The record gives the reactivity of an RNA of 207 nucleotides to DMS and 2A3.
Values are in units of 0.01, from 0 to 300, in steps of 10.
The reactions ran in a buffer of 150 mM KOAc, 10 mM MgCl2 and 150 mM bicine (pH 8.5), at 24 C.
For 2A3, 530 sequencing reads were counted.

[RMDB]
RNA sequence: GGGAACGACUCGAGUAGAGUCGAAAACUCUUAUUCUAUGCUACAAGGAAUCAUUCUCAAUCAACUUGUGAUGUGUGAUGAAAAGUGGAUUUUAUUCAACAACCGGUGAUGACCAGCUCAGUGGUUGGACUGAGAAGAAGUGCCACAGCACUUCCCAAUUUUAAGUCUCCUUCGGGAGACUUAAAAUAAAAGAAACAACAACAACAAC
Reactivity to DMS in 0.01 (KOAc 150mM, MgCl2 10mM, bicine 150mM(pH8.5), 24C), signal-to-noise 1, nucleotides 027 to 156: c030u000c040u000u000a100u020u000c040u000a000u000g040c050u000a120c030a030a140g000g000a090a030u000c030a040u020u000c040u000c050a120a110u020c020a100a090c040u020u000g000u020g000a060u010g020u000g040u000g000a110u020g000a030a040a100a050g040u000g020g020a060u000u000u000u000a110u010u010c050a020a110c050a070a090c060c050g010g000u030g010a130u000g000a120c000c020a090g030c040u000c030a050g010u000g010g010u000u000g000g010a140c060u010g020a140g010a070a040g000a030a020g020u000g010c000c090a070c100a190g010c000a030c050u000u000c020c020c010a100
Reactivity to 2A3 in 0.01 (KOAc 150mM, MgCl2 10mM, bicine 150mM(pH8.5), 24C), signal-to-noise 1, nucleotides 027 to 156: c030u010c040u090u120a090u140u030c030u030a150u140g060c000u030a050c040a070a060g060g100a050a080u070c010a030u190u040c020u060c120a070a120u010c020a070a080c140u130u120g030u000g160a050u060g060u010g000u000g010a060u020g040a050a030a100a050g050u050g020g030a000u050u090u010u080a080u140u160c040a120a090c020a010a060c070c020g060g060u040g000a040u000g000a030c030c000a030g110c030u040c010a030g090u060g020g010u000u020g010g030a010c020u020g030a000g010a020a060g020a020a010g030u030g010c030c010a060c020a040g010c020a000c020u000u000c010c000c000a000
2A3 adducts were read by reverse transcription with SuperScript II with manganese.